Chemical mapping of a 177-nucleotide RNA with 2A3.
2A3 is a SHAPE reagent: it acylates the 2'-hydroxyl of flexible nucleotides of all four kinds.
2A3 adducts were read by reverse transcription with SuperScript II with manganese.
The data come from the RNA Mapping Database (RMDB), library TTRDES.
The RNA was probed in 150 mM KOAc, 10 mM MgCl2 and 150 mM bicine (pH 8.5) at 24 C.
RNA sequence: GGGAACGACUCGAGUAGAGUCGAAAAGAUAUGGAAUGCAAGUGGCAACAGCCAUUCAUUCGGAAACGAAUGAUGGACAUGCCAUGCAUUCCUAAGUCAAAGCACUUGUAGUUCGCUACAAGUGCAAGACCGCAUCUGACUUCGGUCAGAUGCGGUCAAAAGAAACAACAACAACAAC
Reactivity to 2A3 in 0.01 (KOAc 150mM, MgCl2 10mM, bicine 150mM(pH8.5), 24C), signal-to-noise 1, nucleotides 027 to 126: g010a010u010a010u020g000g000a040a050u060g000c050a260a050g300u090g120g000c180a300a090c080a300g000c050c000a010u040u120c010a000u070u010c010g050g000a050a050a000c000g010a010a010u030g020a000u000g000g050a040c090a240u300g000c000c000a000u000g010c020a010u000u110c000c000u010a010a000g000u000c030a210a030a130g020c010a000c010u000u000g000u000a040g020u060u100c300g000c210u010a000c010a010a000g010u000g000c000a010a000